Notes
This 177-nucleotide RNA was probed chemically with 2A3 and DMS. The RNA was probed in 150 mM KOAc, 10 mM MgCl2 and 150 mM bicine (pH 8.5) at 24 C. Source: RMDB library OK1LIB, as collected in RNAgym. Values cover nucleotides 27 to 126. For DMS the reverse transcriptase was MarathonRT. The DMS profile rests on 1,073 reads.
RNA sequence: GGGAACGACUCGAGUAGAGUCGAAAAGGUGAGCUGGACGGGAAGUAGGUCCAGCGACUGCUUCCGAAGCUUUGAUAAGAGCAACUCCAUCUACGUUGCUCAAGUAGGUGGUAGCAGCAAACACCGAAUGCGGUACGUGCUUCGGCACGUACCGCAUAAAAGAAACAACAACAACAAC
Reactivity to 2A3 in 0.01 (KOAc 150mM, MgCl2 10mM, bicine 150mM(pH8.5), 24C), signal-to-noise 1, nucleotides 027 to 126: g000g110u070g080a130g000c000u000g050g000a000c000g130g080g070a000a200g090u300a000g100g000u000c000c000a000g000c000g000a000c000u000g000c000u060u000c010c010g000a050a000g100c000u000u020u140g120a140u080a070a140g000a020g010c000a000a000c000u000c050c100a300u050c020u100a020c090g000u000u080g000c000u000c080a000a000g050u140a060g000g140u220g150g010u150a000g000c000a000g010c000a000a060a000c000a000c010c000g000a000
Reactivity to DMS in 0.01 (KOAc 150mM, MgCl2 10mM, bicine 150mM(pH8.5), 24C), signal-to-noise 1, nucleotides 027 to 126: g000g000u000g000a090g000c000u000g000g000a000c080g000g000g000a040a220g100u060a090g120g000u070c000c000a000g000c010g000a060c000u000g000c000u000u000c020c070g000a300a300g000c000u000u020u080g000a150u080a250a230g000a010g010c020a050a020c000u000c140c000a250u090c160u000a070c280g000u070u000g010c000u080c000a040a010g000u000a010g020g000u000g000g000u000a000g010c000a010g000c120a010a050a300c030a000c000c010g000a000